[RMDB]
Record summary
Chemical mapping of a 207-nucleotide RNA with 2A3 and DMS.
RNA sequence: GGGAACGACUCGAGUAGAGUCGAAAAUUUACAGUCUAAUGCUUACUCAGCCAUUUUACCUAUGUUCGUAAAUCGUUGACUAUACUCAACAAACCACAAAGACAUCGGCACCCUGUACCUACUAUUUGGUGCCUGAGCAGGAAUAGUGGGCACUGCCCUCAUGGUUCAACUUCGGUUGAACCAUGAGAAAAGAAACAACAACAACAAC
Reactivity to 2A3 in 0.01 (KOAc 150mM, MgCl2 10mM, bicine 150mM(pH8.5), 24C), signal-to-noise 4, nucleotides 027 to 156: u090u070u050a040c030a020g030u000c010u100a090a030u070g030c010u030u090a070c060u080c150a050g030c040c040a050u040u060u060u080a080c080c020u130a120u200g130u060u120c050g010u020a010a060a060u060c080g010u030u110g000a000c000u030a040u050a170c040u010c020a020a020c010a040a150a030c000c010a030c070a160a090a020g040a030c020a110u150c100g000g000c020a030c010c010c010u040g000u070a080c000c010u030a040c020u040a060u090u060u070g230g000u030g050c000c010u040g000a050g060c010a000g030g030a040a030u070a050g010u050g000g000g000c040a030c100u060g000c020c000
Reactivity to DMS in 0.01 (KOAc 150mM, MgCl2 10mM, bicine 150mM(pH8.5), 24C), signal-to-noise 1, nucleotides 027 to 156: u010u000u000a040c070a150g020u000c040u000a110a060u010g000c080u010u010a110c050u000c060a100g000c070c010a110u000u000u010u000a070c030c000u000a120u000g040u000u000c080g000u000a060a030a080u000c070g010u000u000g020a050c030u000a120u000a040c080u010c020a030a060c030a060a040a100c030c030a090c110a000a130a100g000a050c030a060u000c070g030g020c020a070c010c000c020u010g010u000a070c040c090u000a060c060u000a060u000u000u000g040g020u010g070c000c030u010g010a090g060c050a060g000g000a060a070u000a060g000u000g000g010g080c040a020c090u010g000c020c060

For DMS the reverse transcriptase was MarathonRT.